[RMDB]
RNA sequence: GGGAACGACUCGAGUAGAGUCGAAAAGGUAAUAGGGGGACGAUAUGUGUAGACGGUUGUCCCGCUUUCCGGACACUGAAUCAGCGUUGUGUCGGACUCGUUUUUUGUAAAACAUGGGACAACGUUGUGCACUACUAGGUUUCGACCUAGUAGUGCAAAAAGAAACAACAACAACAAC
Reactivity to 2A3 in 0.01 (KOAc 150mM, MgCl2 10mM, bicine 150mM(pH8.5), 24C), signal-to-noise 2, nucleotides 027 to 126: g130g000u100a070a030u120a210g030g000g000g010g000a040c030g000a010u070a130u230g150u030g010u020a040g070a190c040g060g020u010u000g010u000c010c000c000g050c000u060u000u000c000c000g070g000a030c020a000c060u120g060a100a130u100c020a060g120c000g030u000u030g040u020g090u000c010g030g000a060c030u040c110g070u000u000u000u010u090u100g290u210a060a040a010a010c030a070u160g020g000g000a010c000a010a010c010g020u020u010g000
Reactivity to DMS in 0.01 (KOAc 150mM, MgCl2 10mM, bicine 150mM(pH8.5), 24C), signal-to-noise 3, nucleotides 027 to 126: g000g010u000a040a080u000a050g000g000g000g020g000a070c090g010a070u010a050u010g020u010g010u000a200g020a040c040g010g020u000u010g000u000c000c000c010g020c180u000u000u000c010c010g010g020a090c040a050c000u010g000a110a080u000c130a070g020c100g000u020u000g000u000g020u000c010g000g010a060c300u010c170g010u000u000u000u000u000u000g000u010a030a020a030a030c010a150u000g000g000g000a010c000a010a020c000g000u000u000g010